[RMDB]
RNA sequence: GGGAACGACUCGAGUAGAGUCGAAAAGCAGCUGCGAUAAAAAAUCGUCUGGCCGCCUCGUGCCUACGAUGGGCUAGGGAAAUGCCGUGACGAGACACGCACUGGGUGGCCAUUGCGUCUGCGGUAGCAGUCUCGAGAAGUUCGCUUCUCGAGACUGAAAAGAAACAACAACAACAAC
Reactivity to DMS in 0.01 (KOAc 150mM, MgCl2 10mM, bicine 150mM(pH8.5), 24C), signal-to-noise 3, nucleotides 027 to 126: g010c030a060g020c030u000g010c010g010a060u030a010a030a130a120a100a060u000c040g000u010c220u000g000g010c000c080g030c050c000u000c200g010u000g020c010c010u000a070c060g030a120u020g000g010g000c030u000a160g000g030g010a060a090a120u000g020c010c000g010u000g010a140c170g010a080g000a060c090a080c110g020c300a080c090u020g000g000g050u000g000g000c000c010a030u000u000g010c120g000u000c020u000g000c010g020g030u000a070g020
Reactivity to 2A3 in 0.01 (KOAc 150mM, MgCl2 10mM, bicine 150mM(pH8.5), 24C), signal-to-noise 3, nucleotides 027 to 126: g000c000a000g020c010u100g000c030g010a010u110a100a300a020a040a030a040u080c010g060u010c040u040g010g000c000c000g000c000c000u010c020g020u010g020c010c010u090a110c060g100a120u190g090g010g000c030u060a090g160g030g170a040a130a090u150g010c020c010g050u040g050a050c030g030a030g020a080c050a010c090g000c000a000c020u010g000g000g030u000g000g000c010c000a000u020u040g010c010g040u070c020u010g030c000g020g000u010a000g050
The data come from the RNA Mapping Database (RMDB), library RFMREP.
The record gives the reactivity of an RNA of 177 nucleotides to DMS and 2A3.
For 2A3 the reverse transcriptase was SuperScript II with manganese.
The 2A3 profile rests on 4,203 reads.
Reactivities are rounded to 0.1 and cut off at 0 and 3.
For DMS the reverse transcriptase was MarathonRT.
The reactions ran in a buffer of 150 mM KOAc, 10 mM MgCl2 and 150 mM bicine (pH 8.5), at 24 C.
Values cover nucleotides 27 to 126.